[RMDB]
RNA sequence: GGGAACGACUCGAGUAGAGUCGAAAAGACGAAAGCUCGGGUCACGAACCGGAUUAGAUACCCGGGUAGUCCGAGCUGUAAACGAUGUCUGCUAGGUGUGGCACAGGCUACGAGCCUGUGCUGUGCCGCCUUUUGGAGUAUUCGUACUCCAAAAGGCAAAAGAAACAACAACAACAAC
Reactivity to 2A3 in 0.01 (KOAc 150mM, MgCl2 10mM, bicine 150mM(pH8.5), 24C), signal-to-noise 3, nucleotides 027 to 126: g020a000c020g040a110a050a000g000c000u000c000g000g010g020u040c020a000c020g000a030a010c000c000g000g000a050u060u080a100g090a170u190a140c000c010c000g000g010g040u100a010g010u010c010c000g000a000g030c010u020g030u130a050a060a000c090g050a060u150g070u020c010u030g050c060u080a020g000g010u030g000u020g020g000c000a000c000a000g010g000c010u110a060c290g040a040g030c000c000u000g000u000g000c000u000g010u000g000c000c020
Reactivity to DMS in 0.01 (KOAc 150mM, MgCl2 10mM, bicine 150mM(pH8.5), 24C), signal-to-noise 3, nucleotides 027 to 126: g020a070c010g000a110a080a010g000c000u000c000g000g000g000u050c300a050c000g000a120a300c010c010g000g010a010u000u000a130g000a210u040a080c180c000c000g000g000g000u030a110g010u000c020c000g000a000g000c000u000g000u000a050a090a180c190g010a140u020g000u000c010u000g020c110u020a060g020g020u000g000u000g020g020c010a000c000a010g000g000c010u030a080c160g010a160g050c000c060u000g000u000g010c000u000g010u010g010c010c010
Conditions: 150 mM KOAc, 10 mM MgCl2 and 150 mM bicine (pH 8.5), 24 C. The record gives the reactivity of an RNA of 177 nucleotides to 2A3 and DMS. Reactivities are rounded to 0.1 and cut off at 0 and 3. For 2A3 the reverse transcriptase was SuperScript II with manganese.